[RMDB]
RNA sequence: GGGAACGACUCGAGUAGAGUCGAAAAAAUAUGCCAUGUACGUUGGCGACUACGAAACGACCGUCAGUGUGUGGCUCCGAAAGAACGGCGAAGAGUAUCCAAUCUACGCGAACACUCGGGGGCAAUGUGAAUGGUACACUCACAACGUCUCGGACUGCCAUAUGAUCUGGUUCGCCAGAUCAUAUGGAAAAGAAACAACAACAACAAC
Reactivity to DMS in 0.01 (KOAc 150mM, MgCl2 10mM, bicine 150mM(pH8.5), 24C), signal-to-noise 1, nucleotides 027 to 156: a080a100u000a050u000g000c030c010a080u000g050u000a030c010g220u020u020g020g000c030g000a080c020u020a300c130g040a150a060a110c080g020a060c000c020g000u030c050a040g000u020g120u000g000u000g130g000c000u000c030c030g040a140a130a130g000a090a110c040g050g020c000g000a110a080g040a090g030u000a050u000c110c130a100a180u000c040u000a050c040g000c020g010a100a050c000a140c050u010c010g000g000g000g000g010c000a100a050u000g060u020g010a040a070u000g000g020u000a100c020a040c080u000c000a050c050a010a150c150g030u000c040u010c020g040g040a150c100u000g010
Reactivity to 2A3 in 0.01 (KOAc 150mM, MgCl2 10mM, bicine 150mM(pH8.5), 24C), signal-to-noise 4, nucleotides 027 to 156: a000a010u300a060u130g000c030c010a030u080g020u080a010c080g050u060u080g000g040c020g080a050c050u190a050c080g250a240a210a030c080g090a100c060c000g000u020c000a020g020u000g020u020g000u000g010g000c000u000c010c020g060a100a120a040g060a090a020c040g050g030c040g040a110a010g020a070g020u050a050u050c030c020a040a040u000c040u130a030c090g030c030g020a080a020c040a030c080u080c080g030g010g000g030g030c020a040a040u070g010u050g040a020a050u050g050g040u050a050c060a020c100u030c000a040c010a040a150c070g030u000c010u020c040g040g020a040c000u090g000
Source: RMDB library OK3TST, as collected in RNAgym. Structure probing data (DMS and 2A3) for a 207-nucleotide construct. For DMS, 1,582 sequencing reads were counted.